Record summary: This 177-nucleotide RNA was probed chemically with DMS and 2A3. It was measured as part of the RMDB libraries RFM100 and RFMREP. For DMS the reverse transcriptase was MarathonRT. 2A3 adducts were read by reverse transcription with SuperScript II with manganese.
[RMDB]
RNA sequence: GGGAACGACUCGAGUAGAGUCGAAAAGAGUGUAAGAGUAAUUAAAACUCCGACGCGUAUUGAAAGAAAGAAUAUUCCGAAAGAUCGUUGCUACGGUAACCUUCUGUCAGGAAUACCCGAAUCAUGAAAAUACCUUAAGGUUCGCCUUAAGGUAUUUAAAAGAAACAACAACAACAAC
Reactivity to DMS in 0.01 (KOAc 150mM, MgCl2 10mM, bicine 150mM(pH8.5), 24C), signal-to-noise 9, nucleotides 027 to 126: g010a170g010u000g000u000a110a090g010a020g000u010a060a130u050u060a090a110a110a030c000u010c000c270g010a120c130g000c020g000u030a080u010u010g000a110a090a120g010a090a080a100g000a110a140u010a020u000u000c010c000g000a100a120a010g000a000u000c160g000u000u000g010c000u010a090c170g030g010u000a010a010c000c040u000u000c000u000g000u010c200a210g000g000a010a010u000a020c020c020c010g010a090a090u020c100a070u020g000a130
Reactivity to 2A3 in 0.01 (KOAc 150mM, MgCl2 10mM, bicine 150mM(pH8.5), 24C), signal-to-noise 9, nucleotides 027 to 126: g100a000g010u130g010u060a050a010g020a010g020u050a110a220u230u170a090a100a050a020c000u000c000c010g020a020c010g010c010g020u110a070u080u130g120a080a090a080g090a040a100a010g100a110a050u060a030u040u010c010c010g030a080a010a000g000a000u020c010g000u000u010g000c010u010a040c180g080g000u000a000a010c000c000u010u000c000u010g100u100c090a030g000g010a000a000u010a020c000c000c010g040a040a060u110c050a090u170g070a090
The reactions ran in a buffer of 150 mM KOAc, 10 mM MgCl2 and 150 mM bicine (pH 8.5), at 24 C.